[RMDB]
RNA sequence: GGGAACGACUCGAGUAGAGUCGAAAACUAACGGCCGGCCAGACACUACAACGGUUCGCAGAUGGGCCGGGGGCGUCAAAACCCUGUAGUGUCACUCUACAUCUGCUAGUGCUGUUCCGGGUUACUUGGUUCAGUGCGAAAUAAUAGGUAACUCGCCGCCUUUGUCUUAGUUCGCUAAGACAAAGGCAAAAGAAACAACAACAACAAC
Reactivity to 2A3 in 0.01 (KOAc 150mM, MgCl2 10mM, bicine 150mM(pH8.5), 24C), signal-to-noise 2, nucleotides 027 to 156: c030u100a100a050c050g080g020c070c040g060g020c020c010a010g010a020c000a000c000u020a010c020a240a050c070g030g020u040u040c080g000c020a030g000a090u070g000g000g010c040c000g000g000g000g010g010c030g030u120c040a030a040a030a060c000c000c020u030g010u010a010g010u010g030u040c070a050c060u170c050u090a060c000a030u020c010u010g000c000u020a030g000u000g020c010u000g030u020u000c000c000g000g010g000u030u010a010c010u020u010g020g010u010u010c000a010g010u020g050c010g010a000a090a010u260a030a060u040a060g030g000u000a010a010c000u000c120g080c050c050
Notes: An RNA of 207 nucleotides, treated with 2A3 and read out base by base. The reactions ran in a buffer of 150 mM KOAc, 10 mM MgCl2 and 150 mM bicine (pH 8.5), at 24 C. Values cover nucleotides 27 to 156. The data come from the RNA Mapping Database (RMDB), library RSTRND.